Annotation:
The record gives the reactivity of an RNA of 177 nucleotides to 2A3 and DMS. The DMS profile rests on 13,778 reads. The 2A3 profile rests on 8,359 reads. Conditions: 150 mM KOAc, 10 mM MgCl2 and 150 mM bicine (pH 8.5), 24 C. It was measured as part of the RMDB library TTRDEL.

RNA sequence: GGGAACGACUCGAGUAGAGUCGAAAAGUAACGUGAUAUGGAUUGUCAGCUCAAGAGAGAUUUCGCGGUCGGAAACGACCGAACUACGAAAUUUGAGAGCUUGGAUUUAUCCUAAGUCUAAAGAUAAUCUGAUAUGUAAGUUCGCUUACAUAUCAGAAAAAGAAACAACAACAACAAC
Reactivity to 2A3 in 0.01 (KOAc 150mM, MgCl2 10mM, bicine 150mM(pH8.5), 24C), signal-to-noise 4, nucleotides 027 to 126: g090u060a170a040c150g040u060g050a020u030a050u190g000g010a010u000u030g020u010c000a010g000c000u000c030a110a040g130a030g020a000g000a240u000u020u000c020g020c010g010g000u000c000g000g010a050a050a060c000g000a000c000c000g020a010a010c010u070a020c020g010a000a010a020u090u090u080g070a090g000a000g000c000u000u060g090g000a030u250u170u140a020u020c000c000u010a080a010g020u000c040u100a200a130a050g110a070u210a220a150
Reactivity to DMS in 0.01 (KOAc 150mM, MgCl2 10mM, bicine 150mM(pH8.5), 24C), signal-to-noise 9, nucleotides 027 to 126: g010u020a080a110c170g020u000g010a030u000a300u000g000g000a020u000u000g000u000c000a040g010c000u000c010a030a160g020a220g010a090g000a020u000u000u000c000g000c000g010g000u000c000g010g000a090a080a190c020g010a010c000c000g010a020a030c150u010a290c020g000a000a000a010u000u000u000g000a210g000a010g010c000u000u000g010g010a020u000u010u000a010u000c000c000u000a040a120g000u000c010u000a040a070a100g010a130u010a070a100